Structure probing data (DMS) for a 177-nucleotide construct. Source: RMDB library TTRINS, as collected in RNAgym. For DMS the reverse transcriptase was MarathonRT. Values cover nucleotides 27 to 126. The reactions ran in a buffer of 150 mM KOAc, 10 mM MgCl2 and 150 mM bicine (pH 8.5), at 24 C.

RNA sequence: GGGAACGACUCGAGUAGAGUCGAAAAGAUAUGGAGCCACCAAGAGUUAACACAGGACAUGCUAGAGAGGGUCGGAAACGACCCACGAUAGCAACAGCCUGUGUUAACUCUUGUUGGCUCCUAAGUCGUCUCUUUAUAACUUCGGUUAUAAAGAGACAAAAGAAACAACAACAACAAC
Reactivity to DMS in 0.01 (KOAc 150mM, MgCl2 10mM, bicine 150mM(pH8.5), 24C), signal-to-noise 2, nucleotides 027 to 126: g010a060u010a300u010g010g000a010g040c020c000a000c040c000a010a000g000a020g010u000u000a000a010c000a010c000a010g000g030a040c090a200u000g000c010u000a010g000a300g000a190g030g030g000u000c010g000g010a080a110a230c000g000a010c000c000c000a020c000g000a280u000a020g000c000a040a010c260a110g000c010c000u000g020u000g000u000u000a000a010c000u010c000u000u010g000u000u010g000g000c010u000c000c000u000a000a090g010u000c080